Source: RMDB library OK1LIB, as collected in RNAgym. Chemical mapping of a 177-nucleotide RNA with DMS and 2A3. The reactions ran in a buffer of 150 mM KOAc, 10 mM MgCl2 and 150 mM bicine (pH 8.5), at 24 C. For DMS, 9,751 sequencing reads were counted. The 2A3 profile rests on 5,189 reads. DMS adducts were read by reverse transcription with MarathonRT.
RNA sequence: GGGAACGACUCGAGUAGAGUCGAAAACAUUGAAAUGGGCACGUUGGUUGCCACAUAUGACAUUGAGAGGUCAAAACAUUAGAGGGUUUGUUUACAAUCAACGAACACGUGACCAAAUUUUAACGUCACGGUCAAGUUAAUUCGUUAACUUGACCGUAAAAGAAACAACAACAACAAC
Reactivity to DMS in 0.01 (KOAc 150mM, MgCl2 10mM, bicine 150mM(pH8.5), 24C), signal-to-noise 5, nucleotides 027 to 126: c020a150u030u030g010a050a070a070u010g000g000g030c060a020c070g020u030u000g020g010u020u000g020c030c060a080c110a030u020a070u020g000a040c030a100u000u000g000a050g010a300g000g020u010c010a040a050a070a100c140a100u020u050a090g010a120g000g000g030u000u000u010g010u000u010u020a090c290a050a110u040c180a020a020c000g010a020a030c060a060c040g000u000g010a020c010c020a040a090a140u010u000u020u020a000a050c130g000u000c030
Reactivity to 2A3 in 0.01 (KOAc 150mM, MgCl2 10mM, bicine 150mM(pH8.5), 24C), signal-to-noise 7, nucleotides 027 to 126: c040a040u130u300g090a050a110a060u090g020g000g010c060a030c100g060u070u140g180g100u100u020g050c020c010a060c010a010u110a040u050g020a010c020a020u020u110g060a040g020a050g100g000u010c010a000a040a090a080c080a140u130u250a090g060a150g080g070g000u040u020u000g030u010u020u080a140c140a090a110u150c040a050a000c010g010a010a000c100a010c100g050u030g000a010c000c000a050a090a080u100u100u010u050a030a020c030g020u020c010